[RMDB]
Source information
The record gives the reactivity of an RNA of 207 nucleotides to DMS and 2A3. Conditions: 150 mM KOAc, 10 mM MgCl2 and 150 mM bicine (pH 8.5), 24 C. For 2A3 the reverse transcriptase was SuperScript II with manganese. For DMS, 3,780 sequencing reads were counted. For DMS the reverse transcriptase was MarathonRT. High 2A3 reactivity points to a flexible backbone, as in loops and unpaired stretches.

RNA sequence: GGGAACGACUCGAGUAGAGUCGAAAAGCAGUAUCUCGUUAUGCGAGGCUCCUAUACAAACACAGGUUGCUGAUCUGACGACGUCGAGAGACGCCCAAGAUUAGGACAGGAUAUAUCGAACCAAGGUGAACCUGUCCAGGGUUCGCCCUGGACAGAACCAUUAGUUUAACUUCGGUUAAACUAAUGGAAAAGAAACAACAACAACAAC
Reactivity to DMS in 0.01 (KOAc 150mM, MgCl2 10mM, bicine 150mM(pH8.5), 24C), signal-to-noise 3, nucleotides 027 to 156: g000c090a150g030u020a100u000c020u000c000g030u000u010a050u000g020c020g020a090g010g020c030u000c020c040u000a140u010a140c060a060a110a170c050a120c060a070g000g000u010u000g000c020u000g010a030u020c030u000g020a160c020g010a020c020g030u000c000g020a300g010a300g020a010c000g000c010c030c080a160a080g020a050u000u000a050g040g000a110c030a100g000g020a150u000a080u010a050u010c020g020a060a080c050c020a050a200g010g000u000g000a060a120c140c000u000g020u000c020c040a040g010g020g010u010u010c300g030c000c010c000u010g000g010a040c030a030g010a050a130
Reactivity to 2A3 in 0.01 (KOAc 150mM, MgCl2 10mM, bicine 150mM(pH8.5), 24C), signal-to-noise 6, nucleotides 027 to 156: g060c040a010g030u110a160u090c020u000c000g060u130u180a120u300g060c000g000a010g020g000c020u060c010c010u100a100u080a180c130a050a190a010c080a010c040a090g120g040u060u160g090c000u010g000a010u000c020u040g020a020c030g020a010c000g000u010c000g020a010g010a010g000a100c000g000c000c000c000a020a010g010a020u000u050a020g010g040a000c020a030g070g030a030u080a010u030a050u240c060g050a040a020c020c030a070a030g100g000u070g040a050a050c000c000u010g000u010c000c010a000g030g010g010u020u060c170g080c010c000c010u000g000g000a000c000a000g000a000a000